Source information:
The record gives the reactivity of an RNA of 177 nucleotides to DMS and 2A3. DMS adducts were read by reverse transcription with MarathonRT. The reactions ran in a buffer of 150 mM KOAc, 10 mM MgCl2 and 150 mM bicine (pH 8.5), at 24 C. Values cover nucleotides 27 to 126. DMS (dimethyl sulfate) methylates the pairing face of unpaired adenines and cytosines. The DMS profile rests on 3,636 reads. For 2A3, 9,179 sequencing reads were counted. 2A3 adducts were read by reverse transcription with SuperScript II with manganese.
RNA sequence: GGGAACGACUCGAGUAGAGUCGAAAAGAUAUGGACGAAGAACGUACUCCCCACCUGGUGGCAUUCGGAAACGAAUGAAUCCAGAGGUACGGGAGUCCUAAGUCAAACGGGAGCUUCGGCUCCCGAACCAUAGCUAUCGGUUCGCCGAUAGCUAUGGAAAAGAAACAACAACAACAAC
Reactivity to DMS in 0.01 (KOAc 150mM, MgCl2 10mM, bicine 150mM(pH8.5), 24C), signal-to-noise 4, nucleotides 027 to 126: g010a060u000a230u010g020g000a030c010g000a130a140g010a150a160c050g010u000a020c020u000c040c000c010c040a300c090c000u000g010g000u010g010g030c010a010u000u000c000g010g000a070a070a200c000g000a030a010u000g010a030a050u000c010c000a000g000a130g010g000u000a020c040g000g000g010a080g010u000c020c000u010a060a150g000u000c020a060a100a200c040g000g000g000a010g000c000u000u000c240g010g000c000u000c000c000c000g000a010a060
Reactivity to 2A3 in 0.01 (KOAc 150mM, MgCl2 10mM, bicine 150mM(pH8.5), 24C), signal-to-noise 4, nucleotides 027 to 126: g080a070u180a090u280g040g000a010c040g140a170a180g070a290a010c020g000u040a010c030u080c020c020c010c010a040c010c010u040g080g030u060g100g070c010a000u000u000c000g040g000a040a060a030c000g010a010a000u010g030a020a030u020c000c000a000g000a030g060g000u030a020c000g010g010g010a020g000u020c000c000u100a160a030g070u060c050a080a070a030c030g000g010g000a010g020c030u080u120c290g140g020c000u010c020c000c000g010a000a000